[RMDB]
RNA sequence: GGGAACGACUCGAGUAGAGUCGAAAAGACGCCUAUAGAAGAAGAGGCUAGGGGGUAUUCCGGUGUGGGAUACUUAGUAAUAUGCAACGCUAAUUGCAUAAGAUUGUAGGACGGAAUUUACAGUCUUUAGAGAUAAGCACGUUCGCGUGCUUAUCAAUCUGUAGUUCGGUUUCGACCGAACUACAGAAAAAGAAACAACAACAACAAC
Reactivity to 2A3 in 0.01 (KOAc 150mM, MgCl2 10mM, bicine 150mM(pH8.5), 24C), signal-to-noise 1, nucleotides 027 to 156: g050a000c110g040c000c020u110a070u130a100g210a150a010g010a030a020g040a030g040g000c040u020a060g020g030g000g040g000u010a010u070u020c000c000g150g000u210g010u070g050g000g000a010u020a070c000u040u120a030g060u080a060a030u070a050u120g000c000a000a090c060g000c110u040a110a100u080u030g010c000a000u000a080a020g030a020u060u080g050u090a000g000g040a010c110g030g080a020a000u140u060u130a060c030a000g000u030c000u020u080u060a090g060a010g000a070u000a000a000g010c000a000c000g000u040u020c190g000c000g050u000g010c020u000u000a000u000c000a000a030
An RNA of 207 nucleotides, treated with 2A3 and read out base by base.
The reactions ran in a buffer of 150 mM KOAc, 10 mM MgCl2 and 150 mM bicine (pH 8.5), at 24 C.
2A3 adducts were read by reverse transcription with SuperScript II with manganese.
It was measured as part of the RMDB library M2RFPK.